Chemical mapping of a 207-nucleotide RNA with 2A3. Conditions: 150 mM KOAc, 10 mM MgCl2 and 150 mM bicine (pH 8.5), 24 C. 2A3 adducts were read by reverse transcription with SuperScript II with manganese.
[RMDB]
RNA sequence: GGGAACGACUCGAGUAGAGUCGAAAAGGUCAGUCCUGAUCGGAAACAGCAGCAGGUGAGUCCGCCUUAUGUGAAGGAUCGGCUGAAACACGAGGAAAUACUGAGCCAACGCAAGACGGUAGCCGAAAAAAUCUAGUUCACUUCGGUGAACUAGAAAGAUGUCGAUAUCGUUCGCGAUAUCGACAUCAAAAGAAACAACAACAACAAC
Reactivity to 2A3 in 0.01 (KOAc 150mM, MgCl2 10mM, bicine 150mM(pH8.5), 24C), signal-to-noise 1, nucleotides 027 to 156: g000g020u050c040a030g040u070c000c010u070g010a040u060c030g090g080a180a070a000c010a000g060c010a000g000c000a010g000g040u100g050a070g110u010c040c020g060c000c020u120u060a140u070g070u010g050a050a020g010g000a040u050c050g000g010c080u040g000a050a060a000c060a050c020g050a010g120g070a060a130a030u150a170c060u090g000a000g050c010c010a060a050c050g010c050a030a040g070a000c040g030g000u030a040g030c060c000g000a080a000a000a000a010a090u000c000u000a000g000u060u000c000a000c000u010u000c120g040g000u020g000a000a000c000u000a000g000a000a000a000